[RMDB]
RNA sequence: GGGAACGACUCGAGUAGAGUCGAAAAGAUAUGGAUCAGGGACAUGCGUUUUGAUCGGAAACGAUCACUACGCAACAGCCCUAUCCUAAGUCAAACUCUGAAACACUGUUCGCAGUGUUUCAGAGAACGAUUGUGGUUACUUCGGUAACCACAAUCGAAAAGAAACAACAACAACAAC
Reactivity to 2A3 in 0.01 (KOAc 150mM, MgCl2 10mM, bicine 150mM(pH8.5), 24C), signal-to-noise 1, nucleotides 027 to 126: g000a030u090a050u160g000g010a010u060c200a060g000g030g030a040c070a180u070g000c000g010u010u010u000u000g010a000u010c000g040g000a090a130a020c040g000a000u000c000a010c000u020a000c010g030c000a000a000c010a010g050c010c000c000u000a000u000c000c000u000a120a010g040u000c050a050a000a060c000u010c000u010g010a000a000a010c000a000c010u010g010u090u140c300g020c140a020g010u000g020u000u040u010c000a010g000a000g000a000a000
Reactivity to DMS in 0.01 (KOAc 150mM, MgCl2 10mM, bicine 150mM(pH8.5), 24C), signal-to-noise 2, nucleotides 027 to 126: g000a070u000a300u000g000g000a020u000c210a000g010g030g010a030c050a220u000g000c010g000u040u010u010u000g020a000u000c000g020g000a070a170a240c000g050a010u010c000a020c000u010a010c020g030c000a000a030c300a150g000c000c000c000u000a030u000c000c000u000a040a090g000u010c020a200a100a100c000u000c000u000g000a010a010a000c000a000c010u000g000u000u010c190g000c000a010g020u010g000u000u010u000c000a000g000a010g000a050a070
The data come from the RNA Mapping Database (RMDB), library TTRDEL. The record gives the reactivity of an RNA of 177 nucleotides to 2A3 and DMS. For DMS, 1,451 sequencing reads were counted. For DMS the reverse transcriptase was MarathonRT. The RNA was probed in 150 mM KOAc, 10 mM MgCl2 and 150 mM bicine (pH 8.5) at 24 C.